[RMDB]
RNA sequence: GGGAACGACUCGAGUAGAGUCGAAAACAGGCGGUCAAGACCGUAGAAGUCACGCUCGGUGUUGCGCUGAACAUGGAUGACCAGCAUGCCGUAGUCGAGCAGAACCCAACGGUUCUCGCGAUUGCCUGGUUGCACGUACUUUCGAGUACGUGCAACCAAAAGAAACAACAACAACAAC
Reactivity to DMS in 0.01 (KOAc 150mM, MgCl2 10mM, bicine 150mM(pH8.5), 24C), signal-to-noise 1, nucleotides 027 to 126: c020a000g000g010c100g040g080u000c000a100a020g050a030c020c000g000u110a030g000a180a120g000u000c120a250c210g020c010u000c020g000g000u000g070u020u020g000c010g000c020u000g000a110a100c030a150u000g040g040a100u020g040a080c030c000a060g000c000a040u000g010c020c070g010u000a040g000u000c020g010a010g020c060a110g000a070a100c060c040c040a300a060c110g000g060u000u010c030u000c080g010c300g000a060u000u000g000c020c000u000
Reactivity to 2A3 in 0.01 (KOAc 150mM, MgCl2 10mM, bicine 150mM(pH8.5), 24C), signal-to-noise 1, nucleotides 027 to 126: c010a000g000g000c010g000g000u000c010a020a000g010a010c020c000g030u050a070g080a150a000g000u000c030a000c150g000c000u000c000g040g000u000g090u070u180g010c060g000c020u050g010a050a070c090a110u110g070g050a160u260g180a210c000c010a020g030c000a000u150g020c030c040g040u040a040g060u060c020g000a000g000c020a030g020a040a020c010c000c010a040a010c000g070g000u280u080c020u060c080g150c100g030a020u050u010g030c000c000u000
Chemical mapping of a 177-nucleotide RNA with DMS and 2A3. 2A3 adducts were read by reverse transcription with SuperScript II with manganese. The DMS profile rests on 649 reads.